[RMDB]
RNA sequence: GGGAACGACUCGAGUAGAGUCGAAAAUGCUGGAUAAAGAGGCGCUUCAGGUGGCUCUUGGGCGAAAGUACUGACGACAGACCAGAAGCGGGAAGCCGUGAUGUUGAUAUGUGAUGCGACCGGUCUGAUAAUGACAUACCUUCGGGUAUGUCAUUAUAAAAGAAACAACAACAACAAC
Reactivity to DMS in 0.01 (KOAc 150mM, MgCl2 10mM, bicine 150mM(pH8.5), 24C), signal-to-noise 6, nucleotides 027 to 126: u010g000c030u010g010g010a140u010a070a070a060g010a060g010g010c040g020c040u000u000c220a080g020g020u000g010g010c040u000c020u000u000g010g010g020c040g000a100a070a100g010u010a070c060u000g000a100c120g010a200c050a050g020a080c030c010a080g010a090a180g020c040g000g000g000a110a120g010c020c030g020u000g010a090u000g000u000u000g000a080u000a080u010g010u010g000a090u010g010c040g000a090c040c060g010g010u000c030u000g010